[RMDB]
RNA sequence: GGGAACGACUCGAGUAGAGUCGAAAAACUCCGGCUCCGGAACCCUCAAAGAUGCAGUCAACGAAGCACUGCGCGAUUGGACCGCAACCUUCCACGAGUCACACUAUCUGCUCGGCACCGCAGCCGGCGAUGCGAGAGGAUUCGUCCUCUCGCAUCGAAAAGAAACAACAACAACAAC
Reactivity to DMS in 0.01 (KOAc 150mM, MgCl2 10mM, bicine 150mM(pH8.5), 24C), signal-to-noise 1, nucleotides 027 to 126: a120c100u000c010c000g020g010c030u000c070c060g010g000a130a120c060c000c050u010c140a100a070a090g010a090u010g010c030a080g000u010c070a090a200c100g030a120a100g020c100a050c050u070g000c010g010c030g010a210u000u000g010g010a100c170c010g000c040a060a040c070c030u000u000c010c040a090c110g000a040g010u020c050a070c090a150c080u010a050u000c050u000g000c110u000c060g020g010c080a090c090c040g000c220a070g000c000c010g000g000
Reactivity to 2A3 in 0.01 (KOAc 150mM, MgCl2 10mM, bicine 150mM(pH8.5), 24C), signal-to-noise 1, nucleotides 027 to 126: a030c010u000c000c020g040g000c020u070c040c010g130g030a240a190c050c010c010u050c100a060a020a040g110a050u110g020c010a000g090u050c030a070a090c170g300a180a030g000c080a060c100u030g000c010g000c010g000a050u040u220g100g000a070c010c020g030c030a100a110c020c030u020u000c020c010a050c060g040a020g000u080c050a010c000a010c140u110a080u230c000u030g030c010u040c070g010g030c020a000c070c020g000c000a010g000c010c000g060g000